Background
This 177-nucleotide RNA was probed chemically with 2A3 and DMS. DMS adducts were read by reverse transcription with MarathonRT. Reactivities are rounded to 0.1 and cut off at 0 and 3. The DMS profile rests on 3,795 reads. Values cover nucleotides 27 to 126.

[RMDB]
RNA sequence: GGGAACGACUCGAGUAGAGUCGAAAACGCGAGUUGGUGCACACCGAAGGCAUCUUUGCGGGCAUCUCAACCGGCGCGGUGCUACACGCCGCACUCGGAGUCGGGGCCGGCGCCCUGGCGGCCGGCGACGACGCCCUCGAUUCGUCGAGGGCGUCGUAAAAGAAACAACAACAACAAC
Reactivity to 2A3 in 0.01 (KOAc 150mM, MgCl2 10mM, bicine 150mM(pH8.5), 24C), signal-to-noise 2, nucleotides 027 to 126: c030g010c010g020a030g080u050u040g070g000u020g010c010a020c020a040c120c080g080a090a060g070g000c010a040u030c000u050u040u060g000c010g000g030g000c030a100u030c020u020c060a050a100c020c000g000g030c020g000c000g000g000u020g000c030u140a050c090a050c160g040c010c020g020c010a030c010u100c020g030g050a030g040u030c010g030g000g040g000c000c010g010g020c030g000c000c010c020u070g120g070c050g070g170c020c030g030g000c000g030
Reactivity to DMS in 0.01 (KOAc 150mM, MgCl2 10mM, bicine 150mM(pH8.5), 24C), signal-to-noise 3, nucleotides 027 to 126: c030g010c020g000a040g030u010u010g000g000u010g000c020a060c080a200c090c070g000a090a110g010g010c040a030u010c020u000u000u010g020c040g000g000g000c100a120u000c020u000c060a120a200c050c020g010g010c040g040c040g010g010u000g000c080u010a110c250a210c070g010c030c030g010c020a020c010u010c020g000g000a180g010u000c020g000g010g000g020c020c000g010g000c060g010c020c050c120u000g020g000c010g000g030c010c020g010g010c030g010